An RNA of 207 nucleotides, treated with 2A3 and read out base by base. Source: RMDB library OK3TST, as collected in RNAgym.
RNA sequence: GGGAACGACUCGAGUAGAGUCGAAAACAGAGCGGCGAUCCAGUUCCAGUUGGCUGGCUUGUUCGUGAAACUUUUCGUCCAUGGUUACCAGUCGAUCAGGGCGUUGAGCCGUGCGCGGCAGAUGUCGUACUGCGUGCGGGCGUUGGCUGCCCAGUCAGUCUUAGCUACACUUCGGUGUAGCUAAGACAAAAGAAACAACAACAACAAC
Reactivity to 2A3 in 0.01 (KOAc 150mM, MgCl2 10mM, bicine 150mM(pH8.5), 24C), signal-to-noise 1, nucleotides 027 to 156: c080a000g150a000g010c020g070g000c020g020a020u040c020c010a020g020u130u130c090c040a130g030u150u150g050g020c000u010g010g010c000u040u010g060u270u240c010g000u050g020a050a030a050c000u140u060u050u150c080g020u000c040c100a240u080g010g000u050u100a110c020c020a140g060u050c090g060a060u030c020a060g000g010g010c040g020u000u010g020a030g020c010c030g000u000g000c010g020c000g050g000c010a060g030a300u190g170u300c110g070u170a030c020u000g000c000g020u010g000c000g010g010g020c040g100u020u010g150g000c030u060g000c010c000c000a000g010u010c080a000